[RMDB]
RNA sequence: GGGAACGACUCGAGUAGAGUCGAAAAUGCAGGCCGAGGCGCCGCUGGCCUCGUAAAAAGCGGCACAAAAGUAAUUGCCAACAAUUACGACUACGCUCUGGCUGCUUAAUUGACGGCCACGUCGAACCGGUUCACGCCUGAUAGACCGGUGAGACGUCAUCCGAAGAAACUUCGGUUUCUUCGGAUGAAAAGAAACAACAACAACAAC
Reactivity to DMS in 0.01 (KOAc 150mM, MgCl2 10mM, bicine 150mM(pH8.5), 24C), signal-to-noise 1, nucleotides 027 to 156: u010g020c040a070g050g000c000c060g000a010g060g040c040g030c020c160g000c110u000g000g080c000c040u000c030g020u000a030a160a090a070a040g020c050g000g000c150a230c110a060a110a090a150g030u000a000a010u000u000g000c160c300a050a160c030a040a020u020u000a040c000g030a290c070u000a110c050g030c050u000c120u000g020g020c000u000g000c020u000u020a190a210u000u000g010a130c060g000g030c060c020a110c000g020u010c040g020a280a040c050c000g000g040u010u000c040a130c080g040c000c040u000g020a210u000a240g020a070c000c000g070g000u000g000a300g000a010c040g000u000
Reactivity to 2A3 in 0.01 (KOAc 150mM, MgCl2 10mM, bicine 150mM(pH8.5), 24C), signal-to-noise 4, nucleotides 027 to 156: u090g010c010a010g000g000c010c010g000a010g010g010c020g010c020c020g010c020u030g060g180c000c000u040c010g050u080a010a020a010a000a010g000c000g010g040c050a020c050a070a070a000a010g010u020a000a030u020u030g090c090c040a070a060c020a200a010u030u010a010c010g040a020c040u180a060c100g040c090u070c060u080g000g000c010u010g000c010u030u060a130a100u300u100g050a120c010g000g000c000c000a030c010g000u000c000g000a010a020c000c000g030g010u060u070c140a040c100g020c000c000u040g000a070u120a110g030a000c000c000g000g000u000g000a010g000a000c010g010u010

An RNA of 207 nucleotides, treated with DMS and 2A3 and read out base by base.
Values cover nucleotides 27 to 156.
For DMS, 1,222 sequencing reads were counted.
For 2A3, 4,175 sequencing reads were counted.